[RMDB]
RNA sequence: GGGAACGACUCGAGUAGAGUCGAAAAGAUAAGACGUCUAAUAUUCACUAAUAGAUACCACAAAAGGUGUUAGUUCAUUAAGACAGCAGGACGGUGGCCAUGGAAGUCGGCAUCCGCUAAGGAGUGUCUGUGGUGUGCUGUUCGCAGCACACCACAGAAAAGAAACAACAACAACAAC
Reactivity to 2A3 in 0.01 (KOAc 150mM, MgCl2 10mM, bicine 150mM(pH8.5), 24C), signal-to-noise 1, nucleotides 027 to 126: g210a000u170a110a000g140a080c100g000u000c040u000a050a000u050a150u020u030c090a000c060u050a000a040u000a000g220a030u010a030c000c000a130c120a130a000a210a000g000g000u050g000u060u040a030g000u000u110c050a050u130u100a000a120g000a000c030a000g040c040a000g010g040a000c000g000g000u000g030g000c000c000a000u090g090g000a060a000g010u000c000g050g000c000a010u160c060c030g030c090u040a190a000g020g030a010g060u240g050u000